[RMDB]
RNA sequence: GGGAACGACUCGAGUAGAGUCGAAAACGCCAGACGGGUUUACAUCCCUAAAAGCAACGGCAAACUGCGACCACUGGGUAUCCCCGCGUUGCGGGAUCGUAUUGUUCAGCGGGCCAUGCUGAUGGCGAAAUGGUUUGGGUUUCGACCCAAACCAUUUAAAAGAAACAACAACAACAAC
Reactivity to DMS in 0.01 (KOAc 150mM, MgCl2 10mM, bicine 150mM(pH8.5), 24C), signal-to-noise 2, nucleotides 027 to 126: c040g000c000c020a050g000a150c300g030g000g020u000u010u030a100c210a130u000c000c000c000u020a110a090a150a060g000c020a050a120c130g020g000c040a090a100a300c060u000g010c120g020a060c060c030a100c050u000g020g000g020u010a040u000c120c020c010c020g040c130g020u040u020g020c020g010g000g010a000u000c080g010u000a080u000u000g000u000u000c020a100g000c260g000g010g010c000c010a090u000g020c000u000g000a140u000g000g000c030g010
The record gives the reactivity of an RNA of 177 nucleotides to DMS.
The data come from the RNA Mapping Database (RMDB), library OK2TRN.